[RMDB]
The data come from the RNA Mapping Database (RMDB), library TTRINS. Structure probing data (2A3 and DMS) for a 177-nucleotide construct. The RNA was probed in 150 mM KOAc, 10 mM MgCl2 and 150 mM bicine (pH 8.5) at 24 C. Reactivities are rounded to 0.1 and cut off at 0 and 3.
RNA sequence: GGGAACGACUCGAGUAGAGUCGAAAAGAUAUGGACAGAUACCUCGCGAAGAACGUACCUGAAUGACGGAAUAUAUCGGAAACGAUAUAUUCCGUCGCGGUACGGGAGCGAGGUCUGUCCUAAGUCACAAUGGAUUUUUCUUCGGAAAAAUCCAUUGAAAAGAAACAACAACAACAAC
Reactivity to 2A3 in 0.01 (KOAc 150mM, MgCl2 10mM, bicine 150mM(pH8.5), 24C), signal-to-noise 2, nucleotides 027 to 126: g000a010u020a030u100g000g000a000c000a000g010a050u300a160c000c010u000c020g000c000g290a300a050g000a010a000c000g010u020a010c000c030u110g250a300a300u300g000a110c000g000g000a010a020u010a000u020a010u010c030g030g000a000a000a000c000g000a000u000a000u000a000u000u010c010c000g000u000c000g000c000g000g010u010a000c010g020g000g000a010g000c000g000a000g020g000u020c000u000g000u000c000c000u000a000a000g000u000c000a010
Reactivity to DMS in 0.01 (KOAc 150mM, MgCl2 10mM, bicine 150mM(pH8.5), 24C), signal-to-noise 2, nucleotides 027 to 126: g020a020u000a080u010g000g000a000c000a010g000a130u000a030c000c000u010c000g040c000g000a130a190g010a170a230c010g000u000a000c010c010u000g010a140a150u010g010a030c000g010g010a030a020u000a000u000a000u000c010g030g000a030a020a040c000g020a020u000a010u010a000u000u000c000c000g000u000c010g030c300g000g010u000a000c000g000g010g010a030g000c020g010a000g000g010u000c000u000g000u000c000c000u010a000a010g000u000c020a280